[RMDB]
RNA sequence: GGGAACGACUCGAGUAGAGUCGAAAAGACGCUGAUGCGAUCGACUGUAAGAUAGAUAGACUGAGGAGACAGAUACGUACGGCAAGUAUCGUCGCCAGAAGUACAGUCGCAAAUUGCCGUACGAAGACCGGCUAAAUAGUUUCGACUAUUUAGCCGGAAAAGAAACAACAACAACAAC
Reactivity to 2A3 in 0.01 (KOAc 150mM, MgCl2 10mM, bicine 150mM(pH8.5), 24C), signal-to-noise 4, nucleotides 027 to 126: g080a020c030g010c080u240g080a200u230g040c000g020a060u060c010g000a000c010u010g020u030a100a070g100a260u270a050g120a100u100a070g100a130c040u040g100a050g030g050a090g000a000c050a080g040a040u090a050c000g050u010a000c000g000g000c000a000a000g010u030a040u050c030g000u000c000g000c020c010a080g030a100a010g000u030a000c000a000g000u000c000g000c080a050a130a010u020u020g000c000c000g000u000a020c040g020a020a010g040a030
Reactivity to DMS in 0.01 (KOAc 150mM, MgCl2 10mM, bicine 150mM(pH8.5), 24C), signal-to-noise 2, nucleotides 027 to 126: g000a100c010g020c000u000g010a050u020g000c030g020a050u000c040g010a040c000u000g020u000a010a200g040a120u030a140g040a120u010a060g000a230c080u000g000a300g000g010a080g000a040c000a070g060a030u020a000c030g010u020a040c000g000g000c010a000a010g000u000a050u030c060g010u000c000g000c000c010a100g020a070a060g030u000a020c030a050g000u000c000g000c190a040a060a080u000u000g000c010c000g020u000a080c140g000a130a090g040a190